[RMDB]
The record gives the reactivity of an RNA of 177 nucleotides to 2A3 and DMS. The RNA was probed in 150 mM KOAc, 10 mM MgCl2 and 150 mM bicine (pH 8.5) at 24 C.
RNA sequence: GGGAACGACUCGAGUAGAGUCGAAAAUUCCUUCCAUGCCUACGGUUAGAUGCUUGAAUUUCUUUGGUGGCAUUCUGUCGACACAUGGAAGAUUGAUUUUAGGUAAGAUGUAUCUCCAGCUAUUGAAGAUAACAUGAACGUUCGCGUUCAUGUUAUCAAAAGAAACAACAACAACAAC
Reactivity to 2A3 in 0.01 (KOAc 150mM, MgCl2 10mM, bicine 150mM(pH8.5), 24C), signal-to-noise 5, nucleotides 027 to 126: u020u010c000c000u000u010c010c010a010u010g030c000c040u100a080c020g000g050u090u250a010g000a030u020g020c010u030u140g130a120a130u180u190u090c150u180u160u200g130g040u110g020g000c000a010u140u060c010u000g020u020c020g010a010c010a000c010a060u010g030g000a000a010g020a010u060u180g060a030u010u070u060u130a070g070g000u030a080a030g070a170u110g050u110a070u020c030u000c020c020a040g050c070u110a100u250u180g060a080a020
Reactivity to DMS in 0.01 (KOAc 150mM, MgCl2 10mM, bicine 150mM(pH8.5), 24C), signal-to-noise 4, nucleotides 027 to 126: u000u000c210c000u010u000c010c010a010u010g000c040c070u010a180c020g010g010u010u000a020g010a040u000g010c010u010u010g010a100a090u010u010u010c190u000u000u000g020g020u000g010g010c020a010u010u010c040u000g000u010c010g020a180c300a070c000a010u010g000g000a010a020g000a120u010u000g010a060u000u000u000u000a060g010g010u010a050a080g010a110u010g010u000a100u000c010u000c020c050a100g010c140u010a110u000u000g000a090a130